[RMDB]
RNA sequence: GGGAACGACUCGAGUAGAGUCGAAAAGCGCACGGCGAGGAGCCCCUCGACGACGAGCAGGCCCCGGCCUCCGAGGUGAUCGCCGGCACCGAGACCCGGGACGCCAUCAUGCGCGUUGCCGUCCUCGGCGCCCUGCUCGACGAGGUCAAGGCGGCCCAUCCCUUCAGUCUUUCGAGACUGAAGGGAUAAAAGAAACAACAACAACAAC
Reactivity to 2A3 in 0.01 (KOAc 150mM, MgCl2 10mM, bicine 150mM(pH8.5), 24C), signal-to-noise 2, nucleotides 027 to 156: g140c090g000c040a010c080g000g010c000g010a080g030g050a040g020c010c070c000c010u000c020g050a070c010g020a030c000g010a020g000c020a030g000g000c040c000c020c000g040g000c040c020u100c030c020g100a070g000g050u060g040a060u050c040g030c100c020g000g000c000a000c000c010g030a030g000a030c000c000c000g000g010g000a000c000g050c020c000a150u240c110a090u300g030c070g000c010g090u000u020g160c000c030g130u280c010c040u040c050g000g000c000g030c030c000c000u020g040c000u000c000g080a090c020g060a020g080g060u030c050a030a000g020g000c080g010g060c020c000c010